RNA sequence: GGGAACGACUCGAGUAGAGUCGAAAACAUCGUGCGCCCCACCUAAGCUGGGCCCUCACCAUACGCCGGACCCCCGGACACUCGCUCAGCGACCCCGGUCGCGCAUACACGACCGCACGGGCAACGCCCUGAUUGAGCUAUUCGUAGCUCAAUCAGGAAAAGAAACAACAACAACAAC
Reactivity to DMS in 0.01 (KOAc 150mM, MgCl2 10mM, bicine 150mM(pH8.5), 24C), signal-to-noise 5, nucleotides 027 to 126: c110a100u000c040g010u000g000c070g010c060c020c050c040a090c130c080u010a080a180g030c040u000g020g000g010c020c080c070u000c070a130c090c060a060u010a090c140g020c040c010g000g010a170c100c100c110c020c020g020g000a090c090a070c070u000c090g000c040u000c020a060g000c000g010a190c040c020c040c040g010g020u000c010g010c040g010c160a080u000a080c080a050c020g000a030c030c000g010c130a090c080g020g000g010c030a040a040c060g000c120
Reactivity to 2A3 in 0.01 (KOAc 150mM, MgCl2 10mM, bicine 150mM(pH8.5), 24C), signal-to-noise 3, nucleotides 027 to 126: c010a110u140c030g030u040g030c060g030c030c030c010c040a030c010c050u080a070a030g010c030u020g010g030g020c000c030c010u080c010a100c060c020a080u110a210c080g020c020c000g120g040a220c020c020c020c010c000g010g000a020c020a020c020u130c060g000c010u040c010a010g000c020g090a210c000c000c010c020g000g010u010c000g000c020g030c030a040u140a150c050a010c030g010a010c010c010g020c040a020c000g010g010g000c020a040a010c020g040c000